[RMDB]
RNA sequence: GGGAACGACUCGAGUAGAGUCGAAAAGCGUACGGAAAUUCUAUCGUUAAAAAUGUGAUUGGGUGAAGGUACUUAUUCGUGCCAUGGUGACGGCACGGUAACCAUGAGAAUUAGUACCGACGUACGACCCAUAUGAAAACUUCGGUUUUCAUAUGGGAAAAGAAACAACAACAACAAC
Reactivity to 2A3 in 0.01 (KOAc 150mM, MgCl2 10mM, bicine 150mM(pH8.5), 24C), signal-to-noise 9, nucleotides 027 to 126: g070c000g000u010a000c010g040g060a030a060a020u030u010c020u030a020u030c030g070u170u200a180a130a100a090a110u300g080u100g050a010u030u060g010g010g000u020g040a090a030g020g000u000a000c000u010u010a010u000u010c070g070u120g220c100c010a000u000g010g010u010g010a040c050g050g220c230a040c180g040g000u030a000a000c000c000a000u010g030a020g000a110a010u020u020a000g000u000a000c000c000g000a000c000g000u010a000c000g040a050
Reactivity to DMS in 0.01 (KOAc 150mM, MgCl2 10mM, bicine 150mM(pH8.5), 24C), signal-to-noise 5, nucleotides 027 to 126: g010c010g010u000a010c010g010g010a080a110a020u010u010c020u000a020u000c010g030u040u060a020a080a080a120a110u020g000u010g000a020u000u010g000g000g000u000g010a060a080g000g000u000a000c010u000u000a020u000u000c000g020u020g070c230c020a010u000g000g000u000g000a100c070g000g000c180a070c120g000g010u000a080a020c010c010a020u000g000a090g000a010a010u000u000a010g000u000a000c010c000g020a060c040g010u000a000c010g000a240
An RNA of 177 nucleotides, treated with 2A3 and DMS and read out base by base. For 2A3, 20,410 sequencing reads were counted. The data come from the RNA Mapping Database (RMDB), library OK1LIB. Values cover nucleotides 27 to 126. The RNA was probed in 150 mM KOAc, 10 mM MgCl2 and 150 mM bicine (pH 8.5) at 24 C. DMS adducts were read by reverse transcription with MarathonRT. In probing experiments dimethyl sulfate is read out at A N1 and C N3, which are open when not base-paired.